[RMDB]
Conditions: 150 mM KOAc, 10 mM MgCl2 and 150 mM bicine (pH 8.5), 24 C. Structure probing data (2A3) for a 177-nucleotide construct.

RNA sequence: GGGAACGACUCGAGUAGAGUCGAAAACAACUAAUUUAAUUGACUAGUAUAUAACAAGUAUGGAACAAAGAAAUAGAUUGGUACUAGAUUGACCUAAAGUCUUUCUAUUUAUCCAGCUAGAAUUCAAGGAUUUGCAAGUAUUCGUACUUGCAAAUCCAAAAGAAACAACAACAACAAC
Reactivity to 2A3 in 0.01 (KOAc 150mM, MgCl2 10mM, bicine 150mM(pH8.5), 24C), signal-to-noise 2, nucleotides 027 to 126: c010a000a020c080u110a060a300u190u290u210a170a160u180u160g040a040c010u000a000g150u030a120u100a010u000a270a160c100a010a080g040u090a080u220g070g000a240a040c050a120a100a000g080a070a100a000u000a040g200a160u020u020g000g000u060a000c020u000a000g030a000u040u040g030a000c030c000u060a040a050a050g000u000c000u000u000u000c000u000a000u000u150u000a190u110c000c000a000g000c000u000a000g050a100a120u030u140c040a040a070